An RNA of 177 nucleotides, treated with DMS and 2A3 and read out base by base. It was measured as part of the RMDB library OK2TRN. The RNA was probed in 150 mM KOAc, 10 mM MgCl2 and 150 mM bicine (pH 8.5) at 24 C.

[RMDB]
RNA sequence: GGGAACGACUCGAGUAGAGUCGAAAAUGAAAACGAUCACAGAUGCAGUGCAUAUAUUAAGAUUUGAUGUGGUCUUUUUAGCAGGGGUUUCAUGUUGAGUUAUCCUUCCUAAGUUAAAUUAAUGCACACUAUGUAGAAACUUCGGUUUCUACAUAGUAAAAGAAACAACAACAACAAC
Reactivity to DMS in 0.01 (KOAc 150mM, MgCl2 10mM, bicine 150mM(pH8.5), 24C), signal-to-noise 6, nucleotides 027 to 126: u010g000a020a020a040a040c150g000a020u000c010a020c020a040g010a140u010g020c170a140g020u000g000c010a020u000a100u010a130u010u010a070a120g000a130u000u010u000g010a130u010g020u000g000g010u000c000u010u000u000u000u000a030g000c140a050g010g000g010g010u000u000u000c010a040u010g000u010u010g010a090g010u010u000a020u000c010c020u000u010c040c000u000a040a080g010u010u000a050a060a100u000u000a070a040u000g000c020a020c030
Reactivity to 2A3 in 0.01 (KOAc 150mM, MgCl2 10mM, bicine 150mM(pH8.5), 24C), signal-to-noise 3, nucleotides 027 to 126: u090g000a020a010a010a000c090g000a000u030c010a000c000a030g090a070u110g020c030a020g080u010g000c040a010u110a020u050a050u140u250a200a070g070a160u090u160u300g070a040u050g020u030g020g010u000c000u060u010u000u000u010a040g000c040a020g000g010g020g020u010u110u080c050a050u170g130u260u180g120a040g020u030u020a040u030c000c000u010u010c000c000u030a080a040g040u080u130a140a100a090u070u180a070a020u050g010c000a000c000